[RMDB]
RNA sequence: GGGAACGACUCGAGUAGAGUCGAAAACUGGGUACUAGGUUUUGUGAAGGCUGACUCGGUCUACAAUACCUUACCCAUAGACUACUUGUAGACUAGACCGAGUUAGCCUUUAGUCAUAAGUGGUCAAGGAACAGGUAGAUUUCGAUCUGUCUGUUCCAAAAGAAACAACAACAACAAC
Reactivity to DMS in 0.01 (KOAc 150mM, MgCl2 10mM, bicine 150mM(pH8.5), 24C), signal-to-noise 9, nucleotides 027 to 126: c040u000g010g000g020u020a030c120u020a070g000g010u000u010u010u010g020u010g000a020a010g000g000c010u000g000a020c000u000c000g000g010u000c000u010a010c030a030a110u000a030c030c080u000u020a060c040c020c040a100u020a050g010a060c050u000a030c070u000u010g020u020a040g000a210c200u010a030g000a020c030c000g000a020g000u000u000a020g000c000c000u000u000u000a010g010u010c050a070u010a040a050g010u010g000g010u000c050a110a170
Reactivity to 2A3 in 0.01 (KOAc 150mM, MgCl2 10mM, bicine 150mM(pH8.5), 24C), signal-to-noise 7, nucleotides 027 to 126: c010u010g000g010g020u030a030c060u060a070g040g010u020u010u040u080g080u030g030a020a000g000g000c010u010g020a020c000u010c010g000g010u000c010u010a000c020a010a020u030a050c000c010u010u020a020c000c000c000a000u070a010g000a000c000u020a010c000u060u040g060u140a050g010a030c010u020a020g030a030c020c020g000a000g020u010u020a000g000c000c000u000u000u000a000g000u000c010a020u010a130a030g020u020g030g020u030c040a050a060
Chemical mapping of a 177-nucleotide RNA with DMS and 2A3.
Conditions: 150 mM KOAc, 10 mM MgCl2 and 150 mM bicine (pH 8.5), 24 C.
For 2A3, 19,195 sequencing reads were counted.
For DMS the reverse transcriptase was MarathonRT.